[RMDB]
RNA sequence: GGGAACGACUCGAGUAGAGUCGAAAAGGGCGACAAAACACUACGCCCCCGCCUAGUGUUUUGUGGCGGAGCCAUAUAUCGGUACGGUGGACAUGCGAAAGCAUGUCCAUCGUACUGAUAUAUGGCAGCACGAAGUAAGGUUCGCCUUACUUCGUGCAAAAGAAACAACAACAACAAC
Reactivity to DMS in 0.01 (KOAc 150mM, MgCl2 10mM, bicine 150mM(pH8.5), 24C), signal-to-noise 2, nucleotides 027 to 126: g010g000g010c000g000a050c020a000a010a010a000c020a010c030u000a010c280g000c030c090c150c120c280g000c030c110u000a020g010u000g000u000u000u000u000g010u000g000g030c000g020g020a170g010c000c000a010u000a000u000a000u000c000g000g030u000a000c000g020g010u010g010g000a020c000a010u000g010c000g010a130a130a220g000c000a000u000g010u010c000c000a000u000c000g000u000a000c000u000g000a000u000a000u000a000u000g000g000c010a010